RNA sequence: GGGAACGACUCGAGUAGAGUCGAAAAGCGACGUUUCGACGUCGCAAAAAACCGUAGGACCCUACGAAUAUCCUGAACUACCACAGUGUUUCGAAAGAGACACGUGGCAGGAUACUAUAGGGUCCUAAACGGAAAAAGUGCUGAUUCGUCAGCACAACUAAUGCAAGUAGUUCGCUACUUGCAUUAGAAAAGAAACAACAACAACAAC
Reactivity to DMS in 0.01 (KOAc 150mM, MgCl2 10mM, bicine 150mM(pH8.5), 24C), signal-to-noise 2, nucleotides 027 to 156: g020c000g000a030c000g030u000u010u000c220g020a050c000g050u000c000g000c000a000a010a030a050a050a050c010c000g030u010a080g000g000a010c000c000c000u010a030c040g010a120a030u000a000u010c000c000u020g030a220a090c070u010a280c020c000a010c010a130g040u010g010u000u000u000c000g010a120a100a260g000a030g010a000c010a000c000g010u010g010g000c000a010g000g000a010u000a000c020u080a130u000a010g020g000g030u000c000c010u000a000a000a100c000g010g020a060a060a090a080a090g020u000g010c010u000g010a060u000u010c260g010u000c000a010g010c000a000c000a020a090